[RMDB]
This 177-nucleotide RNA was probed chemically with 2A3 and DMS. The reactions ran in a buffer of 150 mM KOAc, 10 mM MgCl2 and 150 mM bicine (pH 8.5), at 24 C. 2A3 adducts were read by reverse transcription with SuperScript II with manganese.

RNA sequence: GGGAACGACUCGAGUAGAGUCGAAAAGUAACUGUAUUUGUAGGUCUAUGUUCAUUUUGUGUUGCAACUGCUACUGCAGCUGGUCUUGCUAAUCCAGCUGCACAGCCGCAUGUAGAGUUAAUAACUAUGUUAUAUGCACAUUCGUGUGCAUAUAACAAAAAGAAACAACAACAACAAC
Reactivity to 2A3 in 0.01 (KOAc 150mM, MgCl2 10mM, bicine 150mM(pH8.5), 24C), signal-to-noise 4, nucleotides 027 to 126: g020u020a010a020c020u030g040u170a070u050u070u050g040u050a170g030g050u020c050u080a090u090g050u020u110c070a120u080u090u150u200g090u040g080u100u070g010c040a110a080c080u090g000c020u050a030c030u040g000c020a010g000c000u000g000g010u030c040u120u220g070c030u040a010a060u020c010c000a000g000c000u010g000c000a000c010a010g000c010c000g000c000a020u060g000u020a030g010a010g080u030u040a080a100u120a100a040c030u040a050
Reactivity to DMS in 0.01 (KOAc 150mM, MgCl2 10mM, bicine 150mM(pH8.5), 24C), signal-to-noise 8, nucleotides 027 to 126: g010u000a040a050c030u000g010u000a040u000u000u000g010u000a060g030g010u000c090u000a070u010g000u000u010c050a080u010u000u010u010g020u010g010u010u010g010c130a040a060c110u000g010c090u000a100c180u000g010c000a000g010c000u000g000g010u000c130u000u000g010c230u010a120a130u000c020c020a010g010c000u000g010c010a010c110a040g010c010c080g000c040a020u000g010u000a020g010a050g000u000u000a040a060u010a080a130c080u000a110